Notes:
The data come from the RNA Mapping Database (RMDB), library OK2TRN. The record gives the reactivity of an RNA of 177 nucleotides to 2A3 and DMS. For 2A3 the reverse transcriptase was SuperScript II with manganese. For DMS, 1,482 sequencing reads were counted. The RNA was probed in 150 mM KOAc, 10 mM MgCl2 and 150 mM bicine (pH 8.5) at 24 C.
RNA sequence: GGGAACGACUCGAGUAGAGUCGAAAAGGAUCCUCUCACAGGAUUGUCUCUGUGUUCCGAAACUCCAACAGUAUUGCUUCGGGACACCUAAAGCAAUACUUUAGGUAUAGAGAGUAGGAGAGGAUCGACCCCAUAUGCGAUUCGUCGCAUAUGGGGUAAAAGAAACAACAACAACAAC
Reactivity to 2A3 in 0.01 (KOAc 150mM, MgCl2 10mM, bicine 150mM(pH8.5), 24C), signal-to-noise 3, nucleotides 027 to 126: g080g010a000u010c020c000u000c020u000c000a230c070a050g110g120a260u160u300g150u060c010u000c010u010g050u000g010u090u000c010c000g000a050a010a010c050u120c080c020a090a090c040a200g130u200a190u160u150g060c020u010u020c010g010g000g010a010c030a030c010c000u000a020a010a020g050c030a170a050u060a260c000u010u010u000a010g000g000u030a020u190a060g050a020g000a010g010u080a050g060g020a000g000a000g000g010a000u000c000g000
Reactivity to DMS in 0.01 (KOAc 150mM, MgCl2 10mM, bicine 150mM(pH8.5), 24C), signal-to-noise 3, nucleotides 027 to 126: g030g000a030u000c000c000u000c010u000c000a160c120a190g010g010a160u010u020g000u000c010u000c000u000g000u000g000u000u000c000c020g000a020a030a030c030u000c170c120a090a160c200a200g020u020a300u020u000g010c050u000u000c030g000g000g010a050c100a030c050c000u010a000a010a030g010c040a130a080u010a300c010u020u000u000a040g010g000u000a140u000a030g000a050g000a050g030u000a130g020g000a020g010a000g000g000a010u000c000g000